[RMDB]
RNA sequence: GGGAACGACUCGAGUAGAGUCGAAAACGGAGGAGCGCUUCAGGGAUCCCCGGGGAAACCUGGAGCGAACUGGCAAAAAAGGACGGUGGGGAGUGCCCAGCGGCCGACAGGAGUAAUUCCCGCCGAACUAUAACAGUAGGUUCGCCUACUGUUAUAGAAAAGAAACAACAACAACAAC
Reactivity to DMS in 0.01 (KOAc 150mM, MgCl2 10mM, bicine 150mM(pH8.5), 24C), signal-to-noise 3, nucleotides 027 to 126: c090g010g000a180g010g000a090g020c020g000c020u000u000c000a020g000g000g000a300u000c000c010c080c260g000g010g010g000a020a060a240c000c000u000g000g000a000g010c000g000a020a030c030u000g000g000c090a000a030a070a080a060a090g010g010a050c020g000g020u010g010g010g000g020a050g020u000g010c010c000c010a070g010c020g000g000c030c010g010a050c090a070g000g010a090g010u000a050a110u000u000c000c010c000g030c040c050g020a050a140
Reactivity to 2A3 in 0.01 (KOAc 150mM, MgCl2 10mM, bicine 150mM(pH8.5), 24C), signal-to-noise 2, nucleotides 027 to 126: c040g030g060a080g030g040a090g060c000g000c010u030u010c000a010g020g000g000a030u050c010c040c030c080g300g020g000g030a010a030a000c000c010u010g000g000a000g000c000g010a000a000c010u000g000g000c010a000a060a030a080a180a060g080g010a020c050g040g030u040g000g020g010g010a170g040u120g040c000c000c000a030g050c030g070g000c050c030g040a030c040a030g030g070a100g040u030a050a090u040u000c000c000c000g010c030c000g010a030a020
Structure probing data (DMS and 2A3) for a 177-nucleotide construct. The 2A3 profile rests on 2,542 reads.